[RMDB]
RNA sequence: GGGAACGACUCGAGUAGAGUCGAAAAGUCAAUUAUAUCCAGAAGUAACAGUAAAUCACUUACUUGUUGAUGCUUGUAGUAUGCAUUUAAUCACAAAUCCAAAACAAUUUGACGUCAUCGUAUGUGAGAUGCAGAUGUACUUCGGUACAUCUGCAUCAAAAGAAACAACAACAACAAC
Reactivity to 2A3 in 0.01 (KOAc 150mM, MgCl2 10mM, bicine 150mM(pH8.5), 24C), signal-to-noise 2, nucleotides 027 to 126: g000u010c010a000a050u180u030a050u030a070u180c030c050a020g040a120a010g120u080a030a050c050a080g050u080a080a070a100u100c020a050c000u060u100a020c000u030u100g040u090u030g030a030u000g040c030u040u050g030u020a090g100u050a030u100g000c030a040u020u010u200a040a020u110c030a000c050a100a070a040u020c060c000a000a060a060a060c060a110a100u040u010u130g070a080c010g040u050c010a070u040c050g070u100a110u240g050u010g050a050
Reactivity to DMS in 0.01 (KOAc 150mM, MgCl2 10mM, bicine 150mM(pH8.5), 24C), signal-to-noise 2, nucleotides 027 to 126: g020u010c080a050a090u000u000a100u000a080u010c050c060a090g000a060a110g020u000a050a010c090a010g020u000a020a100a190u000c090a070c070u010u010a030c040u000u010g010u010u000g000a030u010g000c070u000u000g000u000a030g000u010a080u020g000c100a020u000u000u000a080a110u000c050a060c060a060a030a090u000c030c050a050a050a050a060c190a040a070u010u000u000g000a070c040g000u000c040a090u000c100g050u030a100u000g010u000g000a090

The record gives the reactivity of an RNA of 177 nucleotides to 2A3 and DMS. The DMS profile rests on 1,583 reads. It was measured as part of the RMDB library OK2TST.